[RMDB]
RNA sequence: GGGAACGACUCGAGUAGAGUCGAAAAAGAUAUCGCAGUAUCGAACACCGUCCCACUCUGGCAAGGUAGGCAGCAAUUUCUCCUCAAACUCGCGCAGGUCCAUCAGGUUCGCGGCCGAGCUGUGGUGCCGUGUCAAACACUUCGGUGUUUGACACGGAAAAGAAACAACAACAACAAC
Reactivity to DMS in 0.01 (KOAc 150mM, MgCl2 10mM, bicine 150mM(pH8.5), 24C), signal-to-noise 2, nucleotides 027 to 126: a050g010a100u000a050u020c100g020c100a090g040u010a070u000c010g000a040a070c050a100c070c040g000u010c020c050c010a190c090u010c060u020g000g020c010a030a060g020g010u000a090g020g030c030a040g020c080a090a070u000u000u000c020u000c010c080u000c100a070a020a070c070u000c050g000c100g010c090a130g010g020u010c050c050a090u000c160a110g060g000u000u020c070g010c080g010g000c060c060g040a040g000c060u000g000u000g000g010u000g000
Reactivity to 2A3 in 0.01 (KOAc 150mM, MgCl2 10mM, bicine 150mM(pH8.5), 24C), signal-to-noise 1, nucleotides 027 to 126: a000g120a070u160a040u070c120g030c070a010g050u010a090u030c010g050a070a050c040a020c020c060g050u060c020c010c000a030c030u090c010u060g030g020c000a050a020g050g000u020a050g100g000c020a000g050c010a060a040u090u060u080c070u020c000c020u040c070a020a070a230c010u010c050g040c020g000c020a000g050g120u000c000c020a110u100c050a050g030g050u120u060c030g000c040g010g000c010c000g040a030g040c070u030g030u050g000g070u030g070
Chemical mapping of a 177-nucleotide RNA with DMS and 2A3. Values cover nucleotides 27 to 126. The DMS profile rests on 1,046 reads. The data come from the RNA Mapping Database (RMDB), library OK2TST. Values are in units of 0.01, from 0 to 300, in steps of 10. Conditions: 150 mM KOAc, 10 mM MgCl2 and 150 mM bicine (pH 8.5), 24 C.